RNA sequence: GGGAACGACUCGAGUAGAGUCGAAAAGUAUUAUUUGCUAAAGAGCAACGUUAGGUUGCUGAAAAUGAUUUAUGGGUAGUGGAAUAGGUUAACCGUAAGACCUUUGGUUGAAAAACUAUGAAAUUAAAAAACCGUAAUACGUUCGCGUAUUACGGAAUCAUCGUAUUAUCUUCGGAUAAUACGAUGAAAAAGAAACAACAACAACAAC
Reactivity to 2A3 in 0.01 (KOAc 150mM, MgCl2 10mM, bicine 150mM(pH8.5), 24C), signal-to-noise 2, nucleotides 027 to 156: g020u000a030u140u040a060u020u160u090g000c020u100a100a080a000g090a020g000c000a000a010c020g050u050u150a070g160g010u000u030g000c020u010g010a020a040a010a020u040g060a020u070u090u140a070u080g040g010g010u020a020g090u030g040g050a050a070u030a170g000g000u050u020a050a020c010c010g070u030a030a050g040a080c030c000u000u010u080g030g010u010u030g010a150a140a010a010a050c040u050a060u190g080a040a110a120u180u260a120a130a070a000a020a020c000c000g000u000a000a000u000a030c000g000u010u010c190g000c010g110u000a000u000u000a000c010g010g000a000a010
Reactivity to DMS in 0.01 (KOAc 150mM, MgCl2 10mM, bicine 150mM(pH8.5), 24C), signal-to-noise 2, nucleotides 027 to 156: g020u000a060u000u000a070u000u000u020g000c020u020a090a070a150g020a080g000c000a020a050c030g000u000u000a120g050g000u000u000g030c010u020g010a080a080a070a100u000g010a100u010u020u000a060u010g010g000g040u010a070g020u010g000g000a090a120u000a050g020g020u000u020a070a220c040c150g000u000a070a300g010a060c010c020u000u000u000g020g030u010u000g000a090a060a180a140a100c050u000a060u000g020a070a070a120u040u040a030a080a130a090a140a080c030c010g050u000a040a000u000a010c010g010u000u010c300g060c010g050u000a000u000u000a020c000g020g010a020a040